[RMDB]
RNA sequence: GGGAACGACUCGAGUAGAGUCGAAAAGGGCAUUUUCCAGCCGGGGCCGAGGCUCCCCACCGGCGCGGGCGUUUUUGUCCGGUAACUGCUGUAGGUGCGGGAGAGGAUGAACGGCAGCGGGCCGGGCCAGGGCAUAAUUAUUCGUAAUUAUGCCCUGAAAAGAAACAACAACAACAAC
Reactivity to 2A3 in 0.01 (KOAc 150mM, MgCl2 10mM, bicine 150mM(pH8.5), 24C), signal-to-noise 2, nucleotides 027 to 126: g010g000g000c060a030u070u080u060u050c040c010a020g040c020c000g030g030g000g100c030c030g000a050g000g090c010u020c030c000c000c000a010c000c010g010g010c070g020c010g010g000g000c040g060u190u260u260u300u300g000u020c000c000g000g000u050a110a090c090u180g010c020u050g120u240a050g000g030u030g030c210g010g020g050a010g000a010g070g060a100u110g030a100a030c010g060g000c020a020g090c030g020g000g080c050c070g040g000g000c000
Reactivity to DMS in 0.01 (KOAc 150mM, MgCl2 10mM, bicine 150mM(pH8.5), 24C), signal-to-noise 3, nucleotides 027 to 126: g010g010g010c040a100u010u000u000u010c020c030a280g000c020c020g020g000g000g020c040c020g010a170g010g020c010u000c000c000c000c020a070c040c000g010g000c040g020c050g010g000g020c050g000u020u000u010u020u000g010u000c010c010g010g000u010a060a110c100u010g020c010u000g020u020a110g030g020u000g020c210g010g000g000a040g010a060g000g000a180u020g000a110a140c060g000g000c010a050g010c030g000g010g020c030c020g000g000g020c150
Chemical mapping of a 177-nucleotide RNA with 2A3 and DMS.
DMS adducts were read by reverse transcription with MarathonRT.
The RNA was probed in 150 mM KOAc, 10 mM MgCl2 and 150 mM bicine (pH 8.5) at 24 C.
2A3 adducts were read by reverse transcription with SuperScript II with manganese.
Source: RMDB library OK2TST, as collected in RNAgym.